[RMDB]
RNA sequence: GGGAACGACUCGAGUAGAGUCGAAAAAGGUUUCGUCACUGACGUUUCCAAUCUCGACGCAAGCGUAGGACCUGACUAUAUUGAUUGGGCCUUUAGCUUAAUGAAGACUUGGUUCAAUUUUGGUAUCCUAGACGUCGUAGUUCGCUACGACGUCUAGAAAAGAAACAACAACAACAAC
Reactivity to 2A3 in 0.01 (KOAc 150mM, MgCl2 10mM, bicine 150mM(pH8.5), 24C), signal-to-noise 3, nucleotides 027 to 126: a010g040g000u020u030u000c020g020u040c060a110c300u300g020a000c010g000u000u000u060c000c000a010a040u010c030u010c060g040a030c020g000c110a040a040g030c050g050u040a020g010g120a280c000c030u000g020a020c050u050a090u120a140u300u090g110a270u040u010g060g020g000c010c030u040u040u130a030g000c030u050u050a100a040u260g090a060a040g010a060c040u060u060g040g000u060u020c000a090a150u080u130u080u130g100g020u090a040u040c000
Reactivity to DMS in 0.01 (KOAc 150mM, MgCl2 10mM, bicine 150mM(pH8.5), 24C), signal-to-noise 2, nucleotides 027 to 126: a090g000g000u000u000u000c020g020u000c020a170c160u000g000a070c030g060u000u000u000c010c000a020a170u000c090u000c010g020a070c120g010c170a060a070g040c050g020u000a030g020g020a100c020c020u020g010a030c050u000a080u000a080u010u000g010a040u010u000g000g000g030c010c000u000u010u010a110g040c060u000u000a060a090u000g000a090a090g000a060c060u000u000g010g010u020u000c060a010a130u000u000u000u000g010g000u000a070u000c110